[RMDB]
RNA sequence: GGGAACGACUCGAGUAGAGUCGAAAAGUCGGCGUGCCAUGCCAGCGGUGCAGCCGUUGCUGACGUGCUACCGCGCUGCGAAAUCGGUUCGCGACCAGCUGUGCCAAGCCCGGAUGGGUGCCGAGCGACCAUCUAGGCGGUUCGCCGCCUAGAUGGUAAAAGAAACAACAACAACAAC
Reactivity to 2A3 in 0.01 (KOAc 150mM, MgCl2 10mM, bicine 150mM(pH8.5), 24C), signal-to-noise 2, nucleotides 027 to 126: g110u010c000g010g030c020g060u140g240c000c010a080u140g200c010c000a030g030c000g000g000u040g030c020a000g020c020c020g030u000u040g020c050u080g020a070c020g080u100g020c080u090a130c160c000g000c080g060c080u150g030c080g090a060a060a060u190c100g090g000u120u060c020g000c010g030a040c000c050a030g020c000u040g000u070g060c000c000a130a010g010c030c020c040g000g000a020u030g050g000g000u000g010c000c030g000a010g050c040g040
Reactivity to DMS in 0.01 (KOAc 150mM, MgCl2 10mM, bicine 150mM(pH8.5), 24C), signal-to-noise 2, nucleotides 027 to 126: g000u000c000g020g020c000g000u000g030c000c020a060u010g020c040c020a180g040c020g030g040u000g010c030a040g020c010c200g040u020u010g000c060u020g000a060c020g020u010g000c110u000a040c130c030g000c100g000c090u020g000c040g000a010a200a120u010c070g000g020u000u000c300g010c000g000a090c020c040a070g000c010u000g000u010g000c030c080a090a150g020c040c050c050g000g000a040u000g000g000g010u030g000c010c010g000a040g020c100g000
Background
Source: RMDB library OK2TRN, as collected in RNAgym. Structure probing data (2A3 and DMS) for a 177-nucleotide construct. For 2A3 the reverse transcriptase was SuperScript II with manganese. The RNA was probed in 150 mM KOAc, 10 mM MgCl2 and 150 mM bicine (pH 8.5) at 24 C. DMS adducts were read by reverse transcription with MarathonRT.